[RMDB]
RNA sequence: GGGAACGACUCGAGUAGAGUCGAAAAGAAUCACCGUACCUAUUUAGGUUUACGCUCCAAGAUCGGUGGAUAGCAGCCAUAUCAAUAUCUAGGAGAACUGUGCUAUGUUUAGAAGAUUAGGUAGUCUAUUACACAGCCAUGUUCGCAUGGCUGUGAACGAGUUAGUUUGUUUCGACAAACUAACUCGAAAAGAAACAACAACAACAAC
Reactivity to DMS in 0.01 (KOAc 150mM, MgCl2 10mM, bicine 150mM(pH8.5), 24C), signal-to-noise 1, nucleotides 027 to 156: g000a170a080u000c020a190c020c000g000u000a070c000c000u000a160u000u020u010a010g010g030u000u010u000a030c040g000c000u000c000c020a050a170g040a020u000c070g010g050u000g030g020a110u010a080g030c100a170g050c010c020a060u000a210u000c080a120a110u000a100u000c020u030a140g000g000a070g000a060a060c060u000g010u000g010c020u010a100u010g000u000u000u000a060g000a130a130g010a110u010u000a040g030g030u010a080g030u010c030u000a110u000u000a190c000a000c000a010g000c000c000a020u010g000u000u010c300g000c040a070u000g000g000c000u000g040u000g000a000a120
Reactivity to 2A3 in 0.01 (KOAc 150mM, MgCl2 10mM, bicine 150mM(pH8.5), 24C), signal-to-noise 2, nucleotides 027 to 156: g080a020a060u080c000a000c010c000g020u050a010c000c000u050a130u210u240u190a050g020g000u010u030u070a040c060g000c030u000c000c020a030a010g010a070u070c040g020g020u030g050g030a050u080a040g000c070a010g040c040c020a040u040a000u120c040a080a110u080a040u090c030u020a030g010g040a030g020a060a040c050u060g030u060g030c030u050a040u160g060u050u100u060a080g040a170a020g010a090u120u090a040g070g000u010a020g070u040c060u020a070u060u110a070c010a000c000a010g000c000c000a000u000g040u030u040c170g000c050a000u000g010g000c000u000g000u000g010a000a000
Structure probing data (DMS and 2A3) for a 207-nucleotide construct. DMS adducts were read by reverse transcription with MarathonRT. For DMS, 2,307 sequencing reads were counted. It was measured as part of the RMDB library M2RFPK.